[RMDB]
About this RNA:
Conditions: 150 mM KOAc, 10 mM MgCl2 and 150 mM bicine (pH 8.5), 24 C. This 177-nucleotide RNA was probed chemically with 2A3 and DMS.
RNA sequence: GGGAACGACUCGAGUAGAGUCGAAAAAUGUCCGGUAAAAUGACUGGUAUCGUAAAAUGGUUCAACGCUGACAAAGGCUUCGGCUUCAUCACUCCUGACGAUGGCUCUAAAGAUGUGUUCGUACACUCCUAGUCAAAAACUUCGGUUUUUGACUAGGAAAAGAAACAACAACAACAAC
Reactivity to 2A3 in 0.01 (KOAc 150mM, MgCl2 10mM, bicine 150mM(pH8.5), 24C), signal-to-noise 3, nucleotides 027 to 126: a010u150g050u050c000c040g010g000u080a050a090a070a080u080g050a040c040u060g030g040u060a030u030c040g000u040a040a120a060a040u090g020g030u010u090c000a030a080c010g000c040u040g060a080c060a030a180a020g080g000c000u020u020c020g000g000c020u070u040c030a040u030c000a000c040u020c000c030u010g040a000c030g060a010u080g020g060c000u000c010u040a040a150a000g060a040u130g070u010g030u080u090c080g020u070a030c080a010c080u070
Reactivity to DMS in 0.01 (KOAc 150mM, MgCl2 10mM, bicine 150mM(pH8.5), 24C), signal-to-noise 2, nucleotides 027 to 126: a060u000g010u000c030c020g020g000u050a060a160a060a040u000g000a040c010u010g000g000u000a030u000c020g000u010a110a150a070a090u000g000g040u010u000c030a100a060c200g020c070u060g000a010c100a050a030a180g000g000c000u030u030c030g000g020c060u010u000c040a010u000c060a100c130u020c000c010u020g010a040c070g030a030u000g000g000c000u000c020u030a020a050a120g010a040u020g000u020g010u010u010c150g000u010a120c080a090c030u000